[RMDB]
RNA sequence: GGGAACGACUCGAGUAGAGUCGAAAAGAUAUGGAUACCUCAUUUGGGAGGUGACUACUCGGAAACGAGUAGCCACCUUUGAUCAAAUGAGGGUAUCCUAAGUCAAACCAUGCGUUCGCGCAUGGAAUCGACCUAUUGAGUUCGCUCAAUAGGUCGAAAAAGAAACAACAACAACAAC
Reactivity to DMS in 0.01 (KOAc 150mM, MgCl2 10mM, bicine 150mM(pH8.5), 24C), signal-to-noise 2, nucleotides 027 to 126: g000a060u010a300u000g000g000a010u000a020c000c000u000c000a000u000u000u000g000g010g000a010g010g030u000g000a010c000u000a000c000u010c000g010g000a170a140a260c000g000a010g010u010a000g010c010c010a000c000c000u000u010u020g010a080u020c000a000a000a020u000g000a030g020g020g000u000a000u010c000c000u010a050a110g000u020c040a130a160a300c010c000a000u000g010c000g010u000u020c190g010c000g020c010a000u000g000g000a080a050
Reactivity to 2A3 in 0.01 (KOAc 150mM, MgCl2 10mM, bicine 150mM(pH8.5), 24C), signal-to-noise 1, nucleotides 027 to 126: g000a020u110a040u150g000g010a010u010a020c010c000u000c010a040u000u000u000g010g010g050a010g000g000u000g000a010c000u000a000c000u010c000g020g010a090a100a030c010g010a030g000u000a000g000c010c000a000c000c000u070u090u060g070a040u030c000a000a000a000u010g000a170g050g020g000u000a000u000c000c000u000a110a020g060u020c050a060a080a170c000c000a000u010g000c010g030u000u100c300g010c000g000c190a010u000g020g060a010a130
An RNA of 177 nucleotides, treated with DMS and 2A3 and read out base by base. For DMS, 2,000 sequencing reads were counted. The RNA was probed in 150 mM KOAc, 10 mM MgCl2 and 150 mM bicine (pH 8.5) at 24 C.